[RMDB]
RNA sequence: GGGAACGACUCGAGUAGAGUCGAAAACGGCCUGAGCGGUCGCUGCCUCGUAUUCCUGUUUGGUGAUCCGCUCGUAAGGUGCUUGCGGCAUGGAUGAUUCGGGGAAGAUCGUCGCGCCCUUCAAGAGCGUCGAGCAUCUGUUCGCAGAUGCUCGACGAAAAGAAACAACAACAACAAC
Reactivity to 2A3 in 0.01 (KOAc 150mM, MgCl2 10mM, bicine 150mM(pH8.5), 24C), signal-to-noise 1, nucleotides 027 to 126: c060g050g020c050c000u080g090a030g000c050g050g000u030c000g040c080u050g000c010c030u030c070g040u050a160u180u130c020c000u150g100u140u210u210g060g000u060g000a080u090c000c010g030c000u010c030g000u050a070a000g050g060u150g110c100u050u160g000c030g000g000c020a070u200g060g080a130u150g020a050u090u080c090g000g000g000g120a020a020g010a010u030c040g010u000c030g000c010g030c000c030c000u040u050c040a100a070g060a030g090
Reactivity to DMS in 0.01 (KOAc 150mM, MgCl2 10mM, bicine 150mM(pH8.5), 24C), signal-to-noise 1, nucleotides 027 to 126: c080g020g010c030c020u010g000a100g030c050g000g000u000c010g020c060u010g010c100c040u000c050g030u000a140u000u000c040c000u000g010u000u020u010g030g010u000g010a060u000c040c020g000c010u010c020g030u010a060a050g010g000u000g010c090u000u000g040c090g000g020c030a090u010g000g030a120u000g000a200u000u000c090g000g020g040g000a080a170g010a070u010c080g010u000c030g010c070g010c010c000c050u010u000c160a070a080g010a090g020